[RMDB]
RNA sequence: GGGAACGACUCGAGUAGAGUCGAAAAGAUAUGGAGUUGAACUACGAGGUUUACACGCAUCGAUCUCGGAAACGAGGGAGCGUGCAAUCUCGCAACUCCUAAGUCAAAACUACCCUUCGGGGUAGAACAUGGAUAUGUCGUUCGCGACAUAUCCAUGAAAAGAAACAACAACAACAAC
Reactivity to DMS in 0.01 (KOAc 150mM, MgCl2 10mM, bicine 150mM(pH8.5), 24C), signal-to-noise 3, nucleotides 027 to 126: g010a030u020a300u020g000g000a020g030u010u000g000a150a050c150u000a300c030g020a000g000g010u000u000u000a160c010a010c000g010c010a300u010c130g000a040u000c010u000c010g000g010a070a090a120c000g010a040g000g010g000a030g000c000g050u010g000c240a020a000u000c010u010c000g000c000a080a000c000u000c010c000u000a020a110g000u000c040a080a020a140a190c000u000a010c000c000c020u000u010c250g010g000g000g000u000a000g010a080a190
Reactivity to 2A3 in 0.01 (KOAc 150mM, MgCl2 10mM, bicine 150mM(pH8.5), 24C), signal-to-noise 2, nucleotides 027 to 126: g030a010u040a050u170g010g010a000g000u020u000g050a120a080c100u130a080c300g000a010g060g010u030u070u240a030c010a010c000g020c020a180u300c060g070a120u010c000u000c010g040g050a090a060a020c020g010a010g000g000g030a020g000c000g010u000g000c000a010a010u000c000u000c000g020c000a000a000c000u000c010c000u000a080a000g020u010c000a000a040a140a160c000u010a010c010c010c000u020u040c300g050g000g000g000u000a000g010a010a030